The data come from the RNA Mapping Database (RMDB), library OK2TRN. Chemical mapping of a 177-nucleotide RNA with 2A3 and DMS. 2A3 adducts were read by reverse transcription with SuperScript II with manganese. Reactivities are given for positions 27 through 126. The 2A3 profile rests on 8,749 reads. The reactions ran in a buffer of 150 mM KOAc, 10 mM MgCl2 and 150 mM bicine (pH 8.5), at 24 C.
[RMDB]
RNA sequence: GGGAACGACUCGAGUAGAGUCGAAAAGACACGACGGAGACGUCGUGUCAAAGAGUGGGAAACCACUCAAAGAGCCACAGCUUCGGCUGUGGCUCAAGGCGCGGCAUGGUCCGCGGAACAAACAGAACGGUAUACUCAUAUUCGUAUGAGUAUACCGAAAAGAAACAACAACAACAAC
Reactivity to 2A3 in 0.01 (KOAc 150mM, MgCl2 10mM, bicine 150mM(pH8.5), 24C), signal-to-noise 4, nucleotides 027 to 126: g000a010c000a000c010g010a010c000g010g020a070g030a050c010g010u000c000g000u000g000u000c000a000a000a000g000a000g000u010g000g000g000a010a060a070c000c000a000c000u000c000a030a040a000g010a000g010c010c010a010c010a010g050c010u130u160c300g130g020c010u010g000u020g010g010c000u000c000a000a000g020g000c010g000c010g000g000c090a240u300g120g030u080c010c010g000c000g010g010a050a020c040a030a110a010c040a030g130a140a030
Reactivity to DMS in 0.01 (KOAc 150mM, MgCl2 10mM, bicine 150mM(pH8.5), 24C), signal-to-noise 4, nucleotides 027 to 126: g010a020c000a010c010g010a010c000g000g000a260g000a210c000g040u000c010g020u010g000u000c000a030a070a120g000a010g020u000g000g010g000a180a140a240c010c000a000c000u000c000a040a090a130g000a030g010c020c000a010c010a000g010c000u000u020c220g030g030c030u000g050u000g000g010c010u000c000a020a060g000g000c020g050c000g000g000c020a220u010g020g010u030c010c000g010c010g000g000a050a100c190a050a050a090c180a120g000a110a140